[RMDB]
RNA sequence: GGGAACGACUCGAGUAGAGUCGAAAAGUGGAGGCCUUCGGGCCUCCACAAAUAAAUUCAGCGGUAAUUCGACCGCAAAUAUUACCGCUGAUGCGGACGAAAAAAGACAGAACUUCGGUUCUGUCAAGUGUUAUUAUGGGUUCGCCCAUAAUAACACAAAAGAAACAACAACAACAAC
Reactivity to 2A3 in 0.01 (KOAc 150mM, MgCl2 10mM, bicine 150mM(pH8.5), 24C), signal-to-noise 1, nucleotides 027 to 126: g020u000g020g050a000g000g010c040c000u060u060c290g090g000g000c000c020u040c000c020a030c000a000a000a000u000a000a010a010u050u000c000a000g000c000g030g000u010a010a010u030u110c090g140a140c120c060g060c070a010a020a000u060a000u010u010a000c000c010g000c010u000g010a000u010g030c060g090g080a070c090g050a200a010a000a000a040a000g010a000c010a010g000a000a000c000u060u170c300g160g000u000u010c010u000g010u000c000a010a000
Reactivity to DMS in 0.01 (KOAc 150mM, MgCl2 10mM, bicine 150mM(pH8.5), 24C), signal-to-noise 2, nucleotides 027 to 126: g030u000g000g000a000g050g040c000c010u000u000c130g030g020g040c000c020u000c000c020a000c000a000a020a030u000a050a090a090u000u000c000a000g010c000g020g000u000a000a010u000u000c100g000a180c190c140g040c190a040a050a070u000a020u000u000a020c000c000g030c010u000g000a010u000g010c090g000g020a070c140g000a010a050a050a090a150a130g000a000c000a010g010a020a010c000u000u030c190g010g000u000u000c010u000g000u000c020a000a050